This 177-nucleotide RNA was probed chemically with DMS and 2A3. Conditions: 150 mM KOAc, 10 mM MgCl2 and 150 mM bicine (pH 8.5), 24 C.
[RMDB]
RNA sequence: GGGAACGACUCGAGUAGAGUCGAAAAGGUCGUUGAAUGCUAGUCUGGUGCUGAGAGCCCUUUUCUCUGGCAACUGUGGACUCAGAGCUAACCAAUUGUAGUUGGCAGUGGGGGUGAAGGGUGAUCCGCGUGGUCCUGACUUCGGUCAGGACUACGCAAAAGAAACAACAACAACAAC
Reactivity to DMS in 0.01 (KOAc 150mM, MgCl2 10mM, bicine 150mM(pH8.5), 24C), signal-to-noise 2, nucleotides 027 to 126: g000g000u020c040g000u010u040g000a060a030u010g010c020u000a030g010u020c050u010g000g030u000g000c010u000g000a080g000a250g030c110c040c000u030u000u000u000c010u010c000u010g020g000c080a070a070c000u000g020u090g000g000a090c050u000c050a020g000a120g000c060u030a000a070c210c110a090a040u010u010g000u020a070g010u010u000g000g000c070a020g080u000g000g000g000g000g000u000g010a030a060g000g000g000u040g000a160u000c020c050
Reactivity to 2A3 in 0.01 (KOAc 150mM, MgCl2 10mM, bicine 150mM(pH8.5), 24C), signal-to-noise 4, nucleotides 027 to 126: g020g010u030c040g040u080u070g090a160a030u130g050c010u010a020g050u010c020u020g030g040u060g040c110u110g030a020g010a010g100c020c000c000u010u030u050u040c040u000c010u030g180g030c040a130a030c070u050g040u120g130g010a020c030u010c050a040g030a100g110c050u130a100a050c010c030a050a040u090u140g100u150a110g000u000u030g080g000c010a010g000u080g010g030g000g000g050u030g010a040a020g000g000g040u030g000a020u010c030c030
About this RNA:
High DMS reactivity at an A or C suggests that its Watson-Crick edge is free.